[RMDB]
RNA sequence: GGGAACGACUCGAGUAGAGUCGAAAACACGGCGUCUAUUUCUCCGGACGUCAACGAUCCGGCAUUUCGUAAUAUCACUUUUGACGGGCUGGUGGCGGCUUAUCGAGAGUCCACCAAAGCGCUGGUGCGCACGAGUCAGUUUCGACUGACUCGUGCGAAAAGAAACAACAACAACAAC
Reactivity to DMS in 0.01 (KOAc 150mM, MgCl2 10mM, bicine 150mM(pH8.5), 24C), signal-to-noise 1, nucleotides 027 to 126: c110a070c100g010g010c010g000u000c000u020a090u030u000u000c000u020c000c000g180g000a000c070g040u000c110a040a090c060g000a210u000c010c070g020g010c060a080u000u000u000c090g000u010a090a150u080a090u060c090a070c010u120u000u000u000g000a120c090g000g000g110c060u000g000g030u040g070g000c300g030g090c120u000u000a090u000c030g000a170g000a110g000u000c000c230a010c030c030a070a300a280g000c060g000c000u010g010g000u040g000
Reactivity to 2A3 in 0.01 (KOAc 150mM, MgCl2 10mM, bicine 150mM(pH8.5), 24C), signal-to-noise 1, nucleotides 027 to 126: c050a000c020g000g000c010g010u030c030u000a150u020u090u000c090u030c040c020g000g030a010c000g000u010c010a010a080c030g010a040u050c020c000g010g000c040a040u070u140u120c050g050u060a100a020u050a200u170c090a190c110u070u110u070u130g080a070c020g010g000g050c060u040g000g030u030g020g050c040g050g010c050u070u070a160u270c110g040a080g010a000g150u000c010c030a010c010c010a000a140a110g020c110g010c040u050g120g000u050g020
This 177-nucleotide RNA was probed chemically with DMS and 2A3. It was measured as part of the RMDB library OK1LIB. The RNA was probed in 150 mM KOAc, 10 mM MgCl2 and 150 mM bicine (pH 8.5) at 24 C. The 2A3 profile rests on 1,137 reads.